The record gives the reactivity of an RNA of 207 nucleotides to 2A3.

RNA sequence: GGGAACGACUCGAGUAGAGUCGAAAACGCUGGGUGUAGGUAGGACAGCAACAGCUCCUGAAGCGCGCACGGGAGACAUGCUGCCGAACUACACCUGUGCUGAAGCGCGCACGGCAACCGAAAGGUGCGAAAAGCGAGCGGCUUCGGCCGCUCGCAAGAGGAAGGAAAUGUUCGCAUUUCCUUCCUCAAAAGAAACAACAACAACAAC
Reactivity to 2A3 in 0.01 (KOAc 150mM, MgCl2 10mM, bicine 150mM(pH8.5), 24C), signal-to-noise 1, nucleotides 027 to 156: c010g000c010u030g000g000g050u000g000u020a010g030g000u020a030g010g050a180c030a020g000c040a020a050c050a120g040c020u040c000c020u030g040a200a050g000c040g000c000g000c030a010c020g030g030g000a010g050a020c110a120u300g000c020u020g020c070c040g010a030a030c000u010a000c000a000c000c000u000g010u000g000c030u000g010a110a040g000c000g000c000g000c000a010c020g000g010c020a030a030c020c000g060a070a080a000g050g000u010g010c030g020a110a190a000a000g030c000g030a000g060c030g050g020c000u060u110c260g160g000c000c020g000c000u030c000g000c000a000a030
The reactions ran in a buffer of 150 mM KOAc, 10 mM MgCl2 and 150 mM bicine (pH 8.5), at 24 C. 2A3 is a SHAPE reagent: it acylates the 2'-hydroxyl of flexible nucleotides of all four kinds.